This 207-nucleotide RNA was probed chemically with 2A3 and DMS. Source: RMDB library M2RFPK, as collected in RNAgym. 2A3 is a SHAPE reagent: it acylates the 2'-hydroxyl of flexible nucleotides of all four kinds. The RNA was probed in 150 mM KOAc, 10 mM MgCl2 and 150 mM bicine (pH 8.5) at 24 C. For DMS the reverse transcriptase was MarathonRT.
RNA sequence: GGGAACGACUCGAGUAGAGUCGAAAACCAGAUGACGGUCCUGCCAUGAGACCGCAACGAGAACAUGUCGCAUCGAAUGGACUCGGGGAGUCGGCAGCUUGCCCCACGGAUGAGCGCCUAAUGCCGGAAGAGACGUGCAACUUCGGUUGCACGUCAAGAUUUUAUUCCGAUUCGUCGGAAUAAAAUCAAAAGAAACAACAACAACAAC
Reactivity to 2A3 in 0.01 (KOAc 150mM, MgCl2 10mM, bicine 150mM(pH8.5), 24C), signal-to-noise 4, nucleotides 027 to 156: c000c000a010g090a150u100g020a070c000g000g010u030c020c010u070g120c060c080a130u120g020a060g010a120c010c020g000c010a010a030c040g050a010g050a090a040c060a100u130g070u170c040g000c080a090u070c120g030a010a030u020g020g010a020c030u020c060g030g010g010g000a030g050u090c040g010g000c010a020g010c040u060u110g060c000c020c020c040a060c070g050g000a140u080g040a020g030c020g030c010c020u050a090a050u100g040c020c020g040g010a040a030g090a030g000a040c000g000u000g000c000a000a000c000u020u070c110g120g000u010u000g000c000a000c000g000u000c000a000a000
Reactivity to DMS in 0.01 (KOAc 150mM, MgCl2 10mM, bicine 150mM(pH8.5), 24C), signal-to-noise 2, nucleotides 027 to 156: c010c020a150g020a150u010g010a060c020g000g000u000c040c020u000g000c040c180a140u000g040a080g010a000c000c010g020c000a050a070c070g000a120g030a080a150c090a070u000g010u030c000g000c090a110u000c050g010a070a300u000g030g020a160c030u000c030g020g000g020g010a120g040u010c030g010g000c020a070g020c040u000u000g000c050c000c020c030a160c120g030g000a100u010g000a060g020c000g000c060c030u030a030a190u000g000c000c010g000g000a110a090g010a170g000a020c000g010u010g000c010a000a020c010u000u000c240g050g060u020u000g020c020a020c000g000u000c000a020a050